This 177-nucleotide RNA was probed chemically with 2A3 and DMS. In probing experiments dimethyl sulfate is read out at A N1 and C N3, which are open when not base-paired. The reactions ran in a buffer of 150 mM KOAc, 10 mM MgCl2 and 150 mM bicine (pH 8.5), at 24 C. For 2A3 the reverse transcriptase was SuperScript II with manganese. DMS adducts were read by reverse transcription with MarathonRT.

RNA sequence: GGGAACGACUCGAGUAGAGUCGAAAACGGGUACGGGCGCGGGCGUCUGCGGUGCCGGAAGCGGUUCGGGAGCGUCGAUGAGCACCGUCAACGCACGAUCCAGCAUCGGUCGUAGCCGGUCCAGUGCGGAAUGGGUCAUAUUCGUAUGACCCAUUCCAAAAGAAACAACAACAACAAC
Reactivity to 2A3 in 0.01 (KOAc 150mM, MgCl2 10mM, bicine 150mM(pH8.5), 24C), signal-to-noise 2, nucleotides 027 to 126: c020g020g000g060u020a000c020g020g020g030c090g040c040g070g030g000c030g030u030c080u060g010c020g000g050u010g000c010c010g070g020a050a000g030c020g050g110u110u160c090g060g060g060a080g140c020g020u050c010g050a050u090g000a010g010c020a020c030c000g000u030c060a000a040c000g040c010a010c010g010a010u060c010c020a060g090c020a050u070c030g100g190u010c020g020u010a020g120c000c000g030g040u000c000c010a040g070u070g150c050
Reactivity to DMS in 0.01 (KOAc 150mM, MgCl2 10mM, bicine 150mM(pH8.5), 24C), signal-to-noise 1, nucleotides 027 to 126: c010g000g000g000u010a010c000g030g000g030c100g000c050g000g000g000c050g010u000c150u010g020c010g000g020u010g010c010c010g010g030a120a130g010c030g010g000u010u010c120g000g020g040a150g020c000g000u000c040g000a270u000g000a180g000c050a020c050c000g010u010c050a030a020c000g010c010a060c020g000a070u000c040c090a100g000c020a070u000c050g000g000u000c030g020u000a030g000c020c010g000g000u000c010c000a110g000u010g020c200